[RMDB]
RNA sequence: GGGAACGACUCGAGUAGAGUCGAAAAGAGCGUCGAGAGACGAAGAGAAGUGCAUGGAUCCACAACGGAGAACGUAAUAAUGCACACCUGUGGCUUAGUGUCCGGAACAACGGGCACAAGAGGCAGAAGCACGCUAGGGAUUCGUCCCUAGCGUGCUAAAAGAAACAACAACAACAAC
Reactivity to DMS in 0.01 (KOAc 150mM, MgCl2 10mM, bicine 150mM(pH8.5), 24C), signal-to-noise 2, nucleotides 027 to 126: g000a010g050c000g000u010c000g000a290g020a160g000a060c010g020a130a090g000a140g020a140a060g000u000g030c000a000u030g080g000a130u020c000c020a140c100a070a100c050g000g050a190g000a210a240c030g000u000a070a140u000a240a020u000g000c000a070c010a270c220c000u050g000u000g000g000c000u000u000a200g030u000g000u000c000c000g000g000a180a070c290a160a290c010g010g000g000c000a000c000a050a010g000a090g010g000c010a020g000a210
Reactivity to 2A3 in 0.01 (KOAc 150mM, MgCl2 10mM, bicine 150mM(pH8.5), 24C), signal-to-noise 1, nucleotides 027 to 126: g170a030g040c020g000u010c020g000a000g000a000g000a070c020g000a080a040g060a000g120a250a000g000u000g000c000a000u060g130g060a040u000c000c000a080c030a300a000c120g020g010a110g120a050a040c000g150u000a000a030u070a080a040u040g000c000a000c000a040c000c000u000g020u070g100g000c000u030u000a020g000u000g000u000c000c010g000g000a000a060c070a130a150c080g000g000g000c010a000c000a000a000g070a000g000g000c000a000g040a070

The record gives the reactivity of an RNA of 177 nucleotides to DMS and 2A3. Values cover nucleotides 27 to 126. For 2A3, 1,004 sequencing reads were counted.